[RMDB]
RNA sequence: GGGAACGACUCGAGUAGAGUCGAAAAGUUCUCUUACUCUUUUCUGUAAAGAGGAGACUGUAGGAUCCGCCGCCCAAGCCCGAACUGAGCCAAGUCCGAGCGAAGGGUCCGCGUGGGGAGGAAACGCUAGGAUGUACGUUCGCGUACAUCAAAAGAAACAACAACAACAAC
Reactivity to 2A3 in 0.01 (KOAc 150mM, MgCl2 10mM, bicine 150mM(pH8.5), 24C), signal-to-noise 9, nucleotides 027 to 129: g000u050u010c010u000c000u030u170a160c010u030c010u030u060u070u050c100u150g210u250a050a060a010g010a000g020g010a000g010a020c040u110g110u190a040g020g010a020u030c040c060g010c010c010g010c000c020c000a020a020g010c000c010c010g010a030a020c040u040g010a010g050c010c030a060a020g010u000c000c010g000a010g010c020g020a030a050g020g010g000u030c010c010g040c020g030u090g000g010g000g000a010g020g000a040a050a010c050g010c050u050a050g140
Reactivity to DMS in 0.01 (KOAc 150mM, MgCl2 10mM, bicine 150mM(pH8.5), 24C), signal-to-noise 9, nucleotides 027 to 129: g020u040u000c020u020c020u020u020a200c040u020c010u010u020u030u000c090u030g030u070a030a070a040g000a040g030g010a030g010a040c120u040g020u010a050g000g040a050u020c050c040g010c060c030g000c010c020c000a050a170g000c090c000c020g000a040a050c110u010g010a080g000c060c050a050a050g010u020c000c030g010a050g000c030g000a040a080g000g000g000u000c030c000g040c060g000u030g010g010g000g000a010g000g000a010a020a040c060g000c120u030a090g000